[RMDB]
RNA sequence: GGGAACGACUCGAGUAGAGUCGAAAAUAACCCCUAUACUUGUAUAGGCGAUUAAUAAAUCUUCUGUAAAUGCUGUAAGAGGAUUACCCCUUGAGGUUUCAGCGCUAGGCUGCUCUAGCGAUUAAUCACAACGAUUUGGUCUUCGGACCAAAUCGAACGUGAUUAAGGGGUUCGCCCCUUAAUCACGAAAAGAAACAACAACAACAAC
Reactivity to 2A3 in 0.01 (KOAc 150mM, MgCl2 10mM, bicine 150mM(pH8.5), 24C), signal-to-noise 1, nucleotides 027 to 156: u040a020a060c000c000c010c000u020a050u030a190c060u200u300g060u070a010u020a020g000g000c020g050a080u070u190a150a140u110a160a090a010u010c010u050u020c000u040g130u190a070a160a190u140g100c070u080g070u110a060a000g000a000g000g000a000u000u060a060c000c000c000c000u020u040g110a110g000g050u050u090u170c060a010g000c000g010c020u000a010g000g090c060u060g060c000u180c020u210a000g000c000g020a000u000u250a010a050u060c090a000c030a170a080c000g000a000u000u000u000g010g010u000c000u000u090c220g080g000a000c010c020a000a000a000u000c000g000a030a000